[RMDB]
The record gives the reactivity of an RNA of 207 nucleotides to DMS and 2A3. The DMS profile rests on 6,923 reads. For 2A3 the reverse transcriptase was SuperScript II with manganese. The 2A3 profile rests on 6,126 reads. It was measured as part of the RMDB library M2RFPK.

RNA sequence: GGGAACGACUCGAGUAGAGUCGAAAAUACCGUCUUCUCCCCGACGGUUUCAAUCCAUAGCUUCACGUUGUGUAGCGUAGGUGGAAGGUAUCGUGUGGUGUAUAAACACCAUAUAGUCUCUUAGGGGUCAAGCUGAUAAACUUCGGUUUAUCAGCAAGCAGAUUACACUAUUCGUAGUGUAAUCUGCAAAAGAAACAACAACAACAAC
Reactivity to DMS in 0.01 (KOAc 150mM, MgCl2 10mM, bicine 150mM(pH8.5), 24C), signal-to-noise 3, nucleotides 027 to 156: u000a070c000c030g000u000c010u000u010c020u010c000c000c000c040g010a030c060g000g030u020u000u010c040a090a130u000c000c010a100u000a160g030c020u000u000c050a040c050g020u000u010g040u010g000u000a040g030c010g020u010a070g010g020u010g020g020a090a070g010g020u010a070u000c060g040u000g040u000g000g030u000g020u000a160u000a160a140a080c010a000c000c010a010u000a030u000a100g030u000c040u010c020u000u000a100g050g000g000g030u000c060a090a230g000c000u020g000a030u000a000a000a020c010u010u000c300g050g000u000u000u000a000u000c000a000g010c000a000a040
Reactivity to 2A3 in 0.01 (KOAc 150mM, MgCl2 10mM, bicine 150mM(pH8.5), 24C), signal-to-noise 4, nucleotides 027 to 156: u060a000c000c000g020u010c020u210u030c050u120c000c010c010c010g010a000c000g000g020u010u020u050c050a030a030u040c010c010a040u040a100g010c010u040u050c010a030c070g300u300u290g010u090g020u050a020g030c030g080u090a080g100g030u020g000g030a030a030g090g020u110a060u190c050g010u010g010u010g030g010u010g060u050a120u110a280a230a010c010a000c000c000a000u010a000u010a020g010u010c010u000c030u130u190a030g000g000g010g010u030c070a090a050g000c000u010g000a000u000a000a000a000c000u030u050c100g070g000u000u000u000a000u000c000a000g010c000a000a000